[RMDB]
RNA sequence: GGGAACGACUCGAGUAGAGUCGAAAAAUCCUGCCCUUCGGGGCAGGAUGCAGCUUCGCUCUUGAGAGCGCGACUUAAGAGGAAUCCCAACGCGCAGAAGCUCUAUUUCUCAGUUCGCUGAGAAAAACGUCUUACUAAAAUUCGUUUUAGUAAGACGAAAAGAAACAACAACAACAAC
Reactivity to DMS in 0.01 (KOAc 150mM, MgCl2 10mM, bicine 150mM(pH8.5), 24C), signal-to-noise 6, nucleotides 027 to 126: a020u000c000c000u000g010c000c000c000u000u010c180g030g010g010g020c000a000g000g000a000u000g020c180a060g000c050u000u000c010g010c010u000c010u010u010g000a040g000a120g020c040g010c060g000a140c010u000u000a020a030g000a040g000g000a120a090u000c000c000c000a120a130c170g010c100g010c040a100g000a040a040g000c020u000c160u000a150u010u000u000c000u000c010a040g010u000u010c220g020c010u000g000a010g000a010a010a020a130a170
Reactivity to 2A3 in 0.01 (KOAc 150mM, MgCl2 10mM, bicine 150mM(pH8.5), 24C), signal-to-noise 6, nucleotides 027 to 126: a000u010c000c000u000g000c010c000c000u030u060c270g050g010g000g010c000a000g010g000a000u010g000c020a010g000c020u020u030c010g010c020u000c000u040u050g040a030g010a030g090c060g010c030g090a120c010u020u030a010a010g010a010g060g030a050a070u010c020c000c010a030a060c090g060c010g000c040a050g020a030a000g000c010u010c020u160a250u060u050u000c010u000c000a030g020u050u070c190g000c070u010g000a000g000a030a010a000a000a000
Conditions: 150 mM KOAc, 10 mM MgCl2 and 150 mM bicine (pH 8.5), 24 C. An RNA of 177 nucleotides, treated with DMS and 2A3 and read out base by base. The DMS profile rests on 8,093 reads. For 2A3, 15,503 sequencing reads were counted. It was measured as part of the RMDB library M2PK50. In probing experiments dimethyl sulfate is read out at A N1 and C N3, which are open when not base-paired.